[RMDB]
RNA sequence: GGGAACGACUCGAGUAGAGUCGAAAAUUAGAAAGGACCGUAGAGACGGCAUAGAAUCUCACCGGAGUGGCACAGAUGUAGUUGAGACCUAAUUCGUCGAUUAGGAUCUUCUGAACGAUGAAGGUGGGAGGCGUAUUUAUUUCGAUAAAUACGCCUCAAAAGAAACAACAACAACAAC
Reactivity to DMS in 0.01 (KOAc 150mM, MgCl2 10mM, bicine 150mM(pH8.5), 24C), signal-to-noise 3, nucleotides 027 to 126: u020u040a080g020a120a070a060g010g000a070c000c040g000u000a090g000a120g010a080c050g000g030c080a050u020a090g000a140a070u020c000u000c010a060c020c020g010g030a230g030u000g010g020c160a130c030a010g000a050u000g010u020a050g010u000u000g020a120g000a160c020c000u030a070a040u010u000c090g080u010c140g020a050u010u000a060g010g010a220u020c040u000u010c010u020g000a030a060c050g010a050u000g000a140a070g000g010u010g000g000
Reactivity to 2A3 in 0.01 (KOAc 150mM, MgCl2 10mM, bicine 150mM(pH8.5), 24C), signal-to-noise 4, nucleotides 027 to 126: u180u050a120g100a050a090a020g080g010a050c000c040g010u040a050g010a000g010a090c020g020g000c010a020u070a170g150a080a070u010c030u030c010a030c000c000g010g050a060g050u040g040g000c030a050c030a040g150a080u120g070u170a070g020u030u070g030a010g050a030c020c000u030a030a030u090u060c070g090u020c040g110a010u020u020a000g020g040a080u050c030u110u000c010u080g040a060a000c020g020a030u040g000a030a000g030g000u060g000g010
Conditions: 150 mM KOAc, 10 mM MgCl2 and 150 mM bicine (pH 8.5), 24 C. The record gives the reactivity of an RNA of 177 nucleotides to DMS and 2A3. For DMS the reverse transcriptase was MarathonRT. For 2A3 the reverse transcriptase was SuperScript II with manganese.